[RMDB]
RNA sequence: GGGAACGACUCGAGUAGAGUCGAAAAGAUAUGGAAAUGAUGGGCAGCUUGGAUUUAUCGGAAACGAUUGUCAGCUGCCAUAUUUCCUAAGUCAAAAGGUGGUCCACAGUUCGCUGUGGACCACCAACUCUUUAUCCUUCUUCGGAAGGAUAAAGAGAAAAGAAACAACAACAACAAC
Reactivity to DMS in 0.01 (KOAc 150mM, MgCl2 10mM, bicine 150mM(pH8.5), 24C), signal-to-noise 2, nucleotides 027 to 126: g000a020u000a300u010g000g010a010a040a020u030g000a050u000g010g020g010c010a000g010c010u000u000g040g020a020u020u010u000a000u000c030g010g000a110a110a150c010g010a010u000u000g020u000c020a030g000c000u000g000c000c000a000u000a000u000u000u000c010c000u010a020a120g000u000c020a100a070a120a120g010g020u010g010g010u020c010c000a000c000a010g020u000u010c270g010c000u010g010u000g000g020a000c010c000a020c000c000a000a020
Reactivity to 2A3 in 0.01 (KOAc 150mM, MgCl2 10mM, bicine 150mM(pH8.5), 24C), signal-to-noise 1, nucleotides 027 to 126: g050a050u040a010u130g000g050a050a030a020u150g210a070u120g200g170g110c000a000g050c030u160u300g110g020a080u300u300u130a040u050c010g000g050a010a020a080c000g000a000u010u020g020u020c020a000g010c010u020g000c000c000a000u000a000u000u000u000c000c010u010a010a020g050u050c060a030a000a010a160g000g000u020g030g000u000c000c020a000c010a030g000u100u160c220g050c130u040g000u000g000g030a000c000c000a030c010c000a000a000